[RMDB]
RNA sequence: GGGAACGACUCGAGUAGAGUCGAAAACCAUCGACUGUCACCAGAUGCUGCAUCACCUGAUCACUGAUGGCUCAACGGUAUCCGGCUGUACAACUGAAUACUUGUAGCUGCCUUUUGAGCGGGUUGGAAAAUCGGAGGUUGUUCGCAACCUCCGAAACACUAAUCCCAUGUUCGCAUGGGAUUAGUGAAAAGAAACAACAACAACAAC
Reactivity to 2A3 in 0.01 (KOAc 150mM, MgCl2 10mM, bicine 150mM(pH8.5), 24C), signal-to-noise 4, nucleotides 027 to 156: c000c000a050u100c070g110a060c060u100g020u110c030a040c070c010a030g010a040u030g000c040u030g020c010a030u040c010a030c020c000u050g040a040u040c010a010c040u010g020a030u030g080g010c030u010c050a050a020c020g000g000u010a020u010c000c020g020g020c060u090g050u180a050c020a060a020c070u130g080a100a050u100a080c050u050u130g040u080a020g050c030u030g010c030c010u100u110u050u090g010a020g020c010g000g020g000u040u080g050g020a050a110a020a080u030c000g000g010a000g010g020u000u000g020u010u060c090g000c080a000a000c000c000u000c000c000g000a000a000a000
Reactivity to DMS in 0.01 (KOAc 150mM, MgCl2 10mM, bicine 150mM(pH8.5), 24C), signal-to-noise 1, nucleotides 027 to 156: c040c040a130u000c030g020a140c060u010g030u000c030a090c030c010a070g000a040u010g000c050u000g000c030a190u000c060a050c000c030u000g000a100u000c040a090c080u000g010a060u000g020g010c000u010c050a090a060c060g000g040u000a010u010c020c010g030g020c000u010g010u020a070c070a050a090c030u030g000a070a040u000a120c040u000u000g000u010a060g020c020u000g020c010c020u000u010u000u030g000a050g030c040g020g000g000u000u010g000g000a060a060a120a090u000c020g020g000a020g030g050u010u000g020u000u030c210g020c000a040a010c000c000u010c000c000g020a000a010a080

Record summary: The record gives the reactivity of an RNA of 207 nucleotides to 2A3 and DMS. Values cover nucleotides 27 to 156. It was measured as part of the RMDB library M2RFPK.